[RMDB]
Source: RMDB library OK2TRN, as collected in RNAgym. An RNA of 177 nucleotides, treated with DMS and 2A3 and read out base by base. 2A3 adducts were read by reverse transcription with SuperScript II with manganese. DMS adducts were read by reverse transcription with MarathonRT. Conditions: 150 mM KOAc, 10 mM MgCl2 and 150 mM bicine (pH 8.5), 24 C.
RNA sequence: GGGAACGACUCGAGUAGAGUCGAAAACGAGCAAAGGCGAGCCGUAACUCUAACGGGAAGGCCAGCCCGAACGAGAGAGCGAAGGCCGCAACCCGGGUUGCAUGCGUAAGGGCAGAGAGUCCACGCAUAAGAAAUGGUUAUUCGUAACCAUUUCUUAAAAAGAAACAACAACAACAAC
Reactivity to DMS in 0.01 (KOAc 150mM, MgCl2 10mM, bicine 150mM(pH8.5), 24C), signal-to-noise 9, nucleotides 027 to 126: c110g020a140g010c060a050a070a120g000g010c000g000a150g010c010c010g000u000a290a080c010u000c020u000a090a140c020g010g000g010a140a080g010g010c090c180a160g010c010c000c000g000a250a190c070g000a060g000a040g000a050g010c010g010a190a300g010g000c010c020g020c040a080a070c020c010c000g020g000g010u000u010g010c070a070u000g010c010g010u010a080a040g030g000g010c000a150g010a090g010a180g010u000c010c020a070c020g000c040a040
Reactivity to 2A3 in 0.01 (KOAc 150mM, MgCl2 10mM, bicine 150mM(pH8.5), 24C), signal-to-noise 3, nucleotides 027 to 126: c030g020a030g020c040a060a040a030g130g000c010g030a060g000c000c000g080u090a020a010c010u010c000u030a080a030c000g000g000g030a090a030g080g010c030c030a020g090c030c010c010g020a030a020c040g020a020g010a010g000a010g050c020g060a110a030g000g000c010c000g000c010a010a020c010c010c000g000g020g040u050u070g010c040a020u020g000c010g010u100a140a180g000g000g010c070a020g060a020g010a030g270u000c000c010a010c010g000c010a010